[RMDB]
RNA sequence: GGGAACGACUCGAGUAGAGUCGAAAAGAUAUGGAUUUGGGCCAGACAUGAACGCUUUCGGAAACGAAAGACGUUCAACAGCUGGCCAAAUCCUAAGUCAAAACUACAAAGCUUCGGCUUUGUAGAACGAUCACCUAUUGUUCGCAAUAGGUGAUCGAAAAGAAACAACAACAACAAC
Reactivity to DMS in 0.01 (KOAc 150mM, MgCl2 10mM, bicine 150mM(pH8.5), 24C), signal-to-noise 2, nucleotides 027 to 126: g000a010u010a120u000g010g000a020u000u000u000g010g010g010c030c010a030g020a050c120a170u010g010a030a000c000g000c000u000u000u010c000g040g020a040a030a070c000g000a010a020a000g000a120c000g020u010u000c000a050a090c100a290g000c010u000g000g010c000c000a000a000a000u000c000c000u000a020a140g000u000c000a060a060a130a260c000u000a010c000a000a000a000g010c000u010u010c300g050g000c000u000u010u010g000u000a000g010a090a110
Reactivity to 2A3 in 0.01 (KOAc 150mM, MgCl2 10mM, bicine 150mM(pH8.5), 24C), signal-to-noise 1, nucleotides 027 to 126: g010a020u010a020u110g000g000a000u000u000u030g170g270g120c000c000a010g000a100c160a300u260g010a000a000c000g000c040u010u000u000c020g000g010a000a010a000c020g020a020a000a010g110a110c000g000u000u000c000a010a030c110a020g000c000u000g000g050c020c000a000a000a000u040c010c000u000a010a000g000u030c040a010a010a170a230c000u000a000c000a010a000a000g000c000u150u290c300g200g000c010u000u050u000g000u000a000g000a040a000